[RMDB]
RNA sequence: GGGAACGACUCGAGUAGAGUCGAAAAGUCCGCUUCGUUUACCAACCAGGUCCUCGCCCAGAUGGAUCUCUGGCGGAACCGGCGGCGGUACGAGCGAAGGGUGUAUCGUCUUCCGAAGGAACUGGACAGUACAGCGUUAUUUCGAUAACGCUGUACUAAAAGAAACAACAACAACAAC
Reactivity to DMS in 0.01 (KOAc 150mM, MgCl2 10mM, bicine 150mM(pH8.5), 24C), signal-to-noise 6, nucleotides 027 to 126: g000u010c000c010g010c080u010u000c040g010u000u010u010a090c050c050a150a260c020c030a090g010g000u000c010c000u010c040g000c180c020c050a050g010a040u020g000g010a200u010c130u010c020u000g010g010c100g000g000a080a070c100c010g000g030c300g010g000c190g010g000u000a010c050g000a120g020c070g010a080a080g000g000g010u000g010u000a030u000c040g000u000c020u010u000c030c010g010a190a100g000g000a050a060c040u010g000g000a100c150
Reactivity to 2A3 in 0.01 (KOAc 150mM, MgCl2 10mM, bicine 150mM(pH8.5), 24C), signal-to-noise 3, nucleotides 027 to 126: g040u020c030c010g060c070u080u110c040g060u040u060u100a220c030c020a120a040c010c010a000g000g010u020c000c010u060c030g040c020c030c000a020g020a050u170g140g060a100u050c020u000c010u050g000g000c020g060g040a090a070c090c000g000g030c040g010g000c010g000g000u030a020c030g030a070g130c090g060a050a090g110g030g010u100g000u010a030u030c010g050u000c020u190u010c020c000g010a050a030g020g010a020a030c020u040g000g030a050c050